[RMDB]
RNA sequence: GGGAACGACUCGAGUAGAGUCGAAAACUGCGGGCCCGGAGCCGAGAGGAAAGUGCUGGCCCAGCCCUCUGAGCGCUCCUCGAGGUGUGCGAGAGGCCCUUCCUCGGCCCCAAAGCCGUCUGCCGGGGUUCUAUCCCUUAUUCGUAAGGGAUAGAACAAAAGAAACAACAACAACAAC
Reactivity to DMS in 0.01 (KOAc 150mM, MgCl2 10mM, bicine 150mM(pH8.5), 24C), signal-to-noise 6, nucleotides 027 to 126: c090u000g010c090g000g010g010c000c050c300g020g000a190g000c010c010g010a140g010a060g010g010a060a080a070g020u010g030c040u010g020g010c040c010c040a250g000c030c010c030u010c040u000g000a070g010c120g000c140u010c030c010u010c050g000a130g000g010u010g020u010g010c040g000a110g020a300g000g000c020c020c030u000u000c030c010u000c030g000g000c010c010c020c040a060a130a300g000c030c030g010u010c060u010g000c040c050g010g000g010
Reactivity to 2A3 in 0.01 (KOAc 150mM, MgCl2 10mM, bicine 150mM(pH8.5), 24C), signal-to-noise 3, nucleotides 027 to 126: c030u060g020c010g010g000g020c010c000c010g020g020a020g000c010c020g040a040g030a050g070g110a110a100a060g100u110g080c100u090g080g060c000c030c010a010g030c010c000c000u020c070u140g050a030g000c120g020c060u030c040c000u000c040g020a010g010g020u180g040u120g090c040g020a170g010a090g120g040c000c020c030u030u010c010c000u000c000g000g020c030c000c000c020a040a080a010g050c020c010g040u020c030u100g050c030c020g010g010g020